[RMDB]
RNA sequence: GGGAACGACUCGAGUAGAGUCGAAAAUUACAUAAGUCUAACACCUUGUUUCGGACUAACAAGGGCGGAUGGAGGAUGGCCGCCCCUCCAUAGUUAGACGUCCGAGAACCAGCCGAAAUGAAAAAGAGGUAAAUCACUGAUUCGUCAGUGAUUUACCAAAAGAAACAACAACAACAAC
Reactivity to DMS in 0.01 (KOAc 150mM, MgCl2 10mM, bicine 150mM(pH8.5), 24C), signal-to-noise 3, nucleotides 027 to 126: u020u060a030c160a150u020a110a110g010u000c010u010a020a140c040a230c020c020u000u000g040u010u000u030c080g020g020a100c140u000a050a120c030a040a060g020g000g040c160g020g000a020u010g000g060a070g000g000a080u060g000g010c060c020g010c040c040c000c000u000c000c010a010u020a120g010u020u000a020g020a060c000g000u000c040c070g000a130g000a090a090c150c050a090g010c030c000g000a020a070a030u030g030a060a030a030a080a130g000a250
Reactivity to 2A3 in 0.01 (KOAc 150mM, MgCl2 10mM, bicine 150mM(pH8.5), 24C), signal-to-noise 4, nucleotides 027 to 126: u140u110a080c040a050u140a130a090g010u000c030u050a020a030c060a080c010c000u000u000g030u050u030u080c120g150g070a130c050u020a010a030c000a010a010g040g010g000c030g120g060a010u020g000g000a000g030g010a030u080g080g000c000c000g020c000c000c000c000u000c000c010a020u030a030g020u030u010a040g010a060c000g010u000c020c030g070a050g010a080a050c010c010a010g030c010c030g050a050a050a000u140g070a080a080a090a030a000g140a040